[RMDB]
RNA sequence: GGGAACGACUCGAGUAGAGUCGAAAAGAUAUGGAUGUAUGACCAUCUUUUGACGUGAUCACCUCGGAAACGAGGUGCGUACGAUAAGAUGGUACAUCCUAAGUCAAAACACGAGUUCGCUCGUGAAGGCGAAGCAAAGGUUCGCCUUUGCUUCGCCAAAAGAAACAACAACAACAAC
Reactivity to 2A3 in 0.01 (KOAc 150mM, MgCl2 10mM, bicine 150mM(pH8.5), 24C), signal-to-noise 1, nucleotides 027 to 126: g010a000u050a040u170g010g030a000u000g000u100a140u290g270a110c020c000a010u130c000u070u160u110u160g200a100c020g040u020g010a060u020c000a010c000c000u000c000g050g050a100a070a040c000g000a000g040g000u000g000c000g020u050a000c000g010a040u010a180a030g000a000u000g000g000u020a000c000a000u040c010c000u010a120a000g030u010c030a070a000a080a050c010a000c030g000a000g000u140u160c240g050c130u000c050g000u040g090a100a100
Reactivity to DMS in 0.01 (KOAc 150mM, MgCl2 10mM, bicine 150mM(pH8.5), 24C), signal-to-noise 1, nucleotides 027 to 126: g000a030u000a270u030g020g030a050u000g010u000a120u020g000a260c010c000a000u000c010u000u000u000u000g010a220c190g010u000g020a090u000c030a000c000c000u000c010g010g000a040a130a220c040g010a020g030g000u000g000c110g020u000a010c010g000a120u000a000a000g000a020u000g000g000u000a000c000a000u000c000c130u000a090a240g000u000c030a090a050a090a240c000a000c000g000a020g010u000u010c220g010c010u030c000g020u000g000a030a000